[RMDB]
RNA sequence: GGGAACGACUCGAGUAGAGUCGAAAAUGAUCGAGAGAUCUAACGAUGUACGCGAGUCAAUGGCACAGACUCGAGCGAAAGCUCGGUCGAAAGACCGCGUACAUCGGUCGGCAAGUGUGGAGUCAAAACUAAUCAUAUAUUUCGAUAUAUGAUUAGUAAAAGAAACAACAACAACAAC
Reactivity to 2A3 in 0.01 (KOAc 150mM, MgCl2 10mM, bicine 150mM(pH8.5), 24C), signal-to-noise 7, nucleotides 027 to 126: u100g000a000u010c010g000a010g000a000g000a110u000c000u020a070a040c010g000a000u000g000u010a000c000g010c010g020a070g030u010c070a050a120u150g130g040c110a060c040a130g010a010c030u050c190g000a000g000c000g040a100a010a000g000c000u000c010g000g010u000c000g000a020a010a000g000a000c000c000g000c000g000u000a000c000a000u000c000g000g010u030c010g020g020c040a150a180g060u080g080u190g160g030a050g020u040c010a040a030a040
Reactivity to DMS in 0.01 (KOAc 150mM, MgCl2 10mM, bicine 150mM(pH8.5), 24C), signal-to-noise 9, nucleotides 027 to 126: u000g010a010u000c010g010a270g000a260g010a010u000c010u010a090a130c010g010a010u000g000u000a000c010g010c000g010a060g010u000c000a050a080u000g010g010c120a080c180a150g000a010c000u000c010g010a010g010c000g000a120a090a170g010c000u000c000g010g000u000c000g000a090a080a140g000a010c000c010g010c010g010u000a000c010a000u000c000g000g010u000c050g010g010c040a050a090g010u000g010u000g010g000a080g010u000c050a070a090a100
Structure probing data (2A3 and DMS) for a 177-nucleotide construct.
Reactivities are given for positions 27 through 126.
It was measured as part of the RMDB library OK2TRN.
DMS (dimethyl sulfate) methylates the pairing face of unpaired adenines and cytosines.
For 2A3, 21,602 sequencing reads were counted.
The RNA was probed in 150 mM KOAc, 10 mM MgCl2 and 150 mM bicine (pH 8.5) at 24 C.